[RMDB]
RNA sequence: GGGAACGACUCGAGUAGAGUCGAAAAGUAUGUAUGGAUAACCAUACGUACAAAUAAUUGCCUCAUGGUGGUGGCUGGGGGCACCCUCAUGGUGGCGGGUGUUCAAAAUAAAGAUCCGAAAGGAUCAGCAUUCGAUGAUCUUCGGAUCAUCGAAUGCAAAAGAAACAACAACAACAAC
Reactivity to 2A3 in 0.01 (KOAc 150mM, MgCl2 10mM, bicine 150mM(pH8.5), 24C), signal-to-noise 1, nucleotides 027 to 126: g020u000a000u000g000u000a000u020g030g000a210u120a200a140c010c000a000u000a000c000g000u000a000c000a000a030a000u290a010a070u160u180g010c000c000u000c000a040u040g010g000u000g130g000u030g070g030c090u070g030g000g000g090g180c000a000c010c000c000u000c000a040u040g070g060u090g000g080c000g000g010g010u100g000u040u150c090a060a000a000a000u170a030a060a000g010a000u000c000c000g070a000a030a070g000g000a000u000c000a010
Source: RMDB library OK1LIB, as collected in RNAgym. An RNA of 177 nucleotides, treated with 2A3 and read out base by base.